Chemical mapping of a 177-nucleotide RNA with 2A3 and DMS.
RNA sequence: GGGAACGACUCGAGUAGAGUCGAAAAUCUGUUUACAAGUUUUCGUUAAGUCCAUGUCUGACUACGAAUCCGUAAACAGAAGCCAGUUUGCGUCAAGUCCGACAUGGACUCUUGGCAGAACUGAUCACCAUAUGAUAGGUUUCGACCUAUCAUAUGGAAAAGAAACAACAACAACAAC
Reactivity to 2A3 in 0.01 (KOAc 150mM, MgCl2 10mM, bicine 150mM(pH8.5), 24C), signal-to-noise 8, nucleotides 027 to 126: u020c010u020g050u060u130u110a090c070a120a100g010u020u020u030u140c070g030u090u130a050a010g010u000c010c010a020u030g030u000c040u030g010a010c010u050a060c110g070a050a030u000c060c010g000u010a000a010a010c010a020g100a060a000g090c030c010a020g000u000u010u010g020c020g010u040c060a040a010g000u000c010c010g020a070c080a070u050g000g000a000c010u010c020u020u020g010g000c010a000g010a020a010c020u030g040a100u130c060a040
Reactivity to DMS in 0.01 (KOAc 150mM, MgCl2 10mM, bicine 150mM(pH8.5), 24C), signal-to-noise 9, nucleotides 027 to 126: u000c040u000g010u000u000u000a080c100a110a060g010u000u000u000u000c130g020u000u000a060a030g000u000c010c030a040u000g010u000c050u000g000a020c010u000a100c140g000a070a080u000c220c040g010u010a000a010a010c010a050g010a080a100g000c160c100a100g000u000u000u000g010c040g010u000c070a100a020g010u000c000c070g010a060c080a030u000g010g000a010c030u000c030u000u010g000g020c020a120g000a010a020c020u000g000a130u010c160a220

The DMS profile rests on 21,529 reads.